RNA sequence: GGGAACGACUCGAGUAGAGUCGAAAAAUUUAUUUUCAUUUUAGCGGGACAAAGGAACAUGGUCGUUUAGAGACGGAGCGGAAGCCAAAAAAAUGACGUGUUGCUUCAGUAAACCAUCUCCUGGUAGUAGUUGGAGAACACACCGGCUUUACACGUAAAUUUGCCUAGUAUUCGUACUAGGCAAAUUAAAAGAAACAACAACAACAAC
Reactivity to DMS in 0.01 (KOAc 150mM, MgCl2 10mM, bicine 150mM(pH8.5), 24C), signal-to-noise 1, nucleotides 027 to 156: a100u000u000u000a020u020u000u010u020c010a120u000u010u000u050a080g040c000g050g060g040a030c070a030a090a170g010g000a120a050c040a010u010g010g010u000c030g030u010u000u000a090g010a110g000a120c100g010g030a110g030c010g010g000a020a050g030c000c020a000a010a030a100a160a130a090u010g010a070c010g020u000g010u000u000g010c000u010u000c050a190g000u000a060a070a080c010c000a080u000c050u010c000c020u010g050g010u000a130g030u000a160g010u000u000g000g010a070g010a090a060c070a070c040a120c100c060g000g020c040u000u010u010a090c050a100c090g010u000a040